Background:
Chemical mapping of a 177-nucleotide RNA with 2A3 and DMS. For DMS the reverse transcriptase was MarathonRT. For DMS, 4,597 sequencing reads were counted. Conditions: 150 mM KOAc, 10 mM MgCl2 and 150 mM bicine (pH 8.5), 24 C. 2A3 adducts were read by reverse transcription with SuperScript II with manganese. The 2A3 profile rests on 9,273 reads. Source: RMDB library TTRDEL, as collected in RNAgym.

[RMDB]
RNA sequence: GGGAACGACUCGAGUAGAGUCGAAAAGAUAUGGAGAAGCUUUUGACGUCCGCACAUCGGAAACGAUGUGUCGGACGAUAAGCUUACUCCUAAGUCAAACUGUUAAGGACUUCGGUCCUUAACAGAACCAUACAAUUGCGUUCGCGCAAUUGUAUGGAAAAGAAACAACAACAACAAC
Reactivity to 2A3 in 0.01 (KOAc 150mM, MgCl2 10mM, bicine 150mM(pH8.5), 24C), signal-to-noise 4, nucleotides 027 to 126: g010a020u060a020u130g000g010a010g000a010a010g010c010u100u100u140u180g300a230c170g010u010c000c000g000c000a000c010a020u020c000g040g030a080a040a020c000g000a000u000g000u010g020u100c020g010g010a000c000g000a000u010a010a010g000c000u000u060a290c000u010c000c000u000a070a000g030u000c040a060a060a160c010u000g000u010u010a000a000g010g000a000c000u030u150c300g060g010u000c000c000u000u000a000a000c000a000g000a000a020
Reactivity to DMS in 0.01 (KOAc 150mM, MgCl2 10mM, bicine 150mM(pH8.5), 24C), signal-to-noise 4, nucleotides 027 to 126: g020a030u000a300u000g000g000a010g010a090a020g000c000u000u000u010u010g000a230c130g000u000c000c010g010c020a000c000a000u000c000g000g000a120a060a180c000g020a000u000g010u000g000u000c010g010g010a010c010g010a020u000a010a010g010c010u000u000a080c000u000c000c000u010a020a070g010u000c020a100a090a230c000u000g000u000u000a000a010g000g000a010c000u000u010c200g010g000u000c000c000u000u000a010a000c000a000g000a050a110